[RMDB]
RNA sequence: GGGAACGACUCGAGUAGAGUCGAAAAAAUCUCGGAAAGCUUCCCCCAAGAAGAACUGGGACGCUCUCAAGAAGGAGGAGAUUUCCCGAAAGCUGGAGACUCGCGGAAUUUCAUUCAAGAAGAAGGUACAUCAGGUACUUCGGUACCUGAAAAAGAAACAACAACAACAAC
Reactivity to 2A3 in 0.01 (KOAc 150mM, MgCl2 10mM, bicine 150mM(pH8.5), 24C), signal-to-noise 6, nucleotides 027 to 129: a000a010u060c030u020c000g060g010a090a030a020g010c020u040u030c010c000c000c000c020a020a010g070a080a000g010a090a040c120u100g000g010g010a010c050g040c050u030c010u010c040a050a060g050a030a020g080g020a010g030g000a000g010a020u050u020u000c000c000c000g010a070a060a000g010c050u030g010g010a030g010a040c000u010c040g100c040g000g020a000a010u040u120u060c070a070u090u080c030a060a020g020a020a000g020a010a000g020g010u090a050c030a100
Reactivity to DMS in 0.01 (KOAc 150mM, MgCl2 10mM, bicine 150mM(pH8.5), 24C), signal-to-noise 5, nucleotides 027 to 129: a140a020u000c000u000c000g000g030a040a080a040g000c070u010u000c040c010c020c050c030a020a030g020a060a060g000a000a000c090u000g000g000g050a060c060g020c070u040c030u020c060a040a040g010a070a040g050g040a040g030g020a100g020a070u030u020u020c040c040c000g030a040a070a100g000c010u000g010g010a000g020a060c000u010c060g000c150g000g030a100a000u040u030u060c080a090u040u060c090a050a040g030a080a040g000a030a040g030g040u040a060c120a080